[RMDB]
RNA sequence: GGGAACGACUCGAGUAGAGUCGAAAAGAUAUGGAGUUAUGCAUUCCGAUAAGACCGUAUCGGAAACGAUACAGGUCUUUUGACGGAAUGUAACUCCUAAGUCAAAACUUCGAGUUCGCUCGAAGAACCCUUACUUUCAGUUCGCUGAAAGUAAGGGAAAAGAAACAACAACAACAAC
Reactivity to 2A3 in 0.01 (KOAc 150mM, MgCl2 10mM, bicine 150mM(pH8.5), 24C), signal-to-noise 4, nucleotides 027 to 126: g020a010u050a020u100g000g000a010g020u040u040a110u260g140c010a010u010u050c010c070g100a140u120a300a010g000a000c000c000g010u000a010u000c000g010g000a030a020a010c020g010a000u000a020c170a250g030g010u000c000u020u000u020u050g150a070c030g000g000a000a000u000g020u000a010a000c000u000c000c000u010a060a010g020u000c020a040a030a160a240c010u010u000c000g010a010g000u000u240c300g140c200u010c010g000a010a010g000a020a030
Reactivity to DMS in 0.01 (KOAc 150mM, MgCl2 10mM, bicine 150mM(pH8.5), 24C), signal-to-noise 2, nucleotides 027 to 126: g000a020u000a210u000g000g000a010g010u000u020a070u010g030c060a010u000u000c000c000g020a140u010a010a020g000a000c010c010g030u000a000u000c000g020g010a040a010a060c000g000a010u000a000c010a120g080g000u010c000u000u000u000u030g000a210c120g020g000a020a000u000g000u000a000a000c000u000c000c000u000a000a080g000u000c010a110a070a110a140c010u000u000c000g000a010g000u000u010c280g010c010u000c000g000a010a010g000a110a150